[RMDB]
RNA sequence: GGGAACGACUCGAGUAGAGUCGAAAAAGCAGCAGGCGGUGAAAUGGUCCCUGCAAACAUGUAUCAUACAUGCAAACGAGUAUUACCAAAUGCGACCAUUUAUCCACAGUAUGGUACUACUGAGUCACAUAUAUAGCUAGUUCGCUAGCUAUAUAUGAAAAGAAACAACAACAACAAC
Reactivity to 2A3 in 0.01 (KOAc 150mM, MgCl2 10mM, bicine 150mM(pH8.5), 24C), signal-to-noise 9, nucleotides 027 to 126: a000g070c090a010g000c000a000g020g010c030g060g030u070g050a030a030a040u030g010g000u010c010c000c000u000g010c000a020a060a000c020a020u030g020u020a110u220c090a050u070a140c010a010u030g060c060a070a080a040c060g030a020g030u030a040u060u050a060c010c010a020a050a060u070g020c020g000a010c000c010a000u050u060u070a090u060c030c020a050c000a040g030u050a030u130g060g030u050a040c020u010a010c010u030g030a030g110u090c010a010
Reactivity to DMS in 0.01 (KOAc 150mM, MgCl2 10mM, bicine 150mM(pH8.5), 24C), signal-to-noise 9, nucleotides 027 to 126: a100g010c120a120g010c030a020g010g010c130g010g010u000g010a060a080a070u000g010g010u000c020c050c020u000g010c050a080a110a120c030a020u000g010u000a090u010c210a140u010a030c010a020u000g000c110a050a110a090c140g000a060g020u000a030u000u000a100c090c070a030a090a060u000g010c070g000a040c040c020a030u000u000u010a100u020c050c040a070c050a060g010u000a110u000g010g010u000a040c080u000a030c030u000g010a150g010u010c110a160
This 177-nucleotide RNA was probed chemically with 2A3 and DMS. For 2A3 the reverse transcriptase was SuperScript II with manganese. For DMS, 43,796 sequencing reads were counted. DMS adducts were read by reverse transcription with MarathonRT. The reactions ran in a buffer of 150 mM KOAc, 10 mM MgCl2 and 150 mM bicine (pH 8.5), at 24 C.